[RMDB]
RNA sequence: GGGAACGACUCGAGUAGAGUCGAAAACAGACCGGUCAUGGUACACCGAUCUUGGCUCCUGGAACGCAAUGAUGGCCGGGUCGUCGGUAAGUAGCCGUAGCUCGAGCAGCAUCAGCUCGCUGUCGAACAUAGCGGCAGUGUUCGCACUGCCGCUAUGAAAAGAAACAACAACAACAAC
Reactivity to DMS in 0.01 (KOAc 150mM, MgCl2 10mM, bicine 150mM(pH8.5), 24C), signal-to-noise 3, nucleotides 027 to 126: c090a080g000a070c040c000g010g000u030c060a110u000g020g030u000a050c260a060c080c030g020a040u000c020u000u010g010g020c090u000c000c010u010g000g020a100a060c110g020c100a090a060u010g010a040u000g010g000c010c020g020g000g020u000c020g030u020c030g020g000u010a030a140g020u000a130g000c020c000g000u000a150g020c020u000c020g000a100g020c030a090g000c020a080u000c070a080g000c070u000c050g000c070u020g010u000c020g000a080a180
Reactivity to 2A3 in 0.01 (KOAc 150mM, MgCl2 10mM, bicine 150mM(pH8.5), 24C), signal-to-noise 1, nucleotides 027 to 126: c040a010g010a030c020c020g030g010u060c040a110u140g050g080u150a060c010a020c030c020g060a050u030c000u050u130g070g010c040u000c010c020u060g030g040a140a050c080g000c050a030a150u090g060a030u060g060g000c010c000g000g000g030u040c020g050u010c020g010g020u050a140a090g060u060a010g070c010c000g040u010a010g000c010u010c040g070a080g020c050a010g050c010a030u050c020a050g010c030u030c000g030c050u060g020u080c010g020a090a010